[RMDB]
RNA sequence: GGGAACGACUCGAGUAGAGUCGAAAACUAGUGCCAUUCGUGGCACUAGAAGGGGUCCAGCCUGGAAAGGCUGGAGGUAUUGGAAUGGUCGGGCCGCCAUUGAAGGUACGCUAUUCGUAGCGUACAAUAUCACAAUAAGUUUCGACUUAUUGUGAUAAAAAGAAACAACAACAACAAC
Reactivity to DMS in 0.01 (KOAc 150mM, MgCl2 10mM, bicine 150mM(pH8.5), 24C), signal-to-noise 9, nucleotides 027 to 126: c000u000a000g010u000g010c000c000a040u000u010c190g030u000g010g010c000a000c000u000a000g010a110a080g000g000g000g010u000c000c000a010g010c000c000u000g010g030a110a150a010g010g010c000u000g010g010a000g000g000u010a100u010u010g010g000a040a020u000g000g010u000c020g000g000g000c010c010g000c010c010a020u000u000g000a150a110g010g000u000a000c000g010c000u000a020u000u010c200g010u000a010g010c000g010u000a000c000a070a100
Reactivity to 2A3 in 0.01 (KOAc 150mM, MgCl2 10mM, bicine 150mM(pH8.5), 24C), signal-to-noise 9, nucleotides 027 to 126: c000u000a000g000u000g010c000c010a020u040u040c240g100u070g000g000c010a000c000u000a000g000a010a020g040g020g010g010u000c000c000a000g010c010c000u050g120g120a210a110a020g000g010c000u000g000g040a000g010g000u090a130u100u260g100g090a020a010u020g000g010u030c020g010g010g000c000c000g000c000c000a010u010u040g100a090a020g150g000u000a000c000g000c000u010a020u040u100c210g080u040a000g000c000g000u000a000c000a000a010